[RMDB]
RNA sequence: GGGAACGACUCGAGUAGAGUCGAAAAGAGUAAUGGGCGCCCAAGGUGAGAUGAAGCUGUAGUCUCACUGGAAGGACUAGAGGUUAGAGGAGACGCGCUCAAAACAAGAAACAGCUUCAUCAAGAGAAUUUUAUCCCGGUUUCGACCGGGAUAAAAUAAAAGAAACAACAACAACAAC
Reactivity to DMS in 0.01 (KOAc 150mM, MgCl2 10mM, bicine 150mM(pH8.5), 24C), signal-to-noise 3, nucleotides 027 to 126: g000a160g000u010a080a140u030g010g000g020c030g000c020c040c040a110a060g010g040u000g000a200g010a010u000g000a000a020g000c000u000g010u000a180g020u000c010u000c020a120c080u010g000g010a180a100g000g010a060c050u030a100g000a180g000g010u010u040a130g010a130g000g000a020g010a070c030g060c100g000c040u010c050a050a060a150a110c150a090a060g000a170a120a050c010a010g000c010u000u000c000a030u010c020a060a060g000a120g000a130
Reactivity to 2A3 in 0.01 (KOAc 150mM, MgCl2 10mM, bicine 150mM(pH8.5), 24C), signal-to-noise 1, nucleotides 027 to 126: g040a000g060u140a080a030u050g030g010g010c040g020c010c000c070a040a010g060g030u070g010a100g000a020u000g000a010a010g000c000u010g010u000a010g070u060c010u000c030a000c030u020g070g030a030a030g020g070a000c050u050a040g020a180g210g000u130u080a080g050a040g080g060a020g000a020c040g010c040g020c060u060c040a020a020a030a010c060a030a000g030a050a100a010c000a000g000c000u000u000c000a030u010c010a050a000g020a010g100a110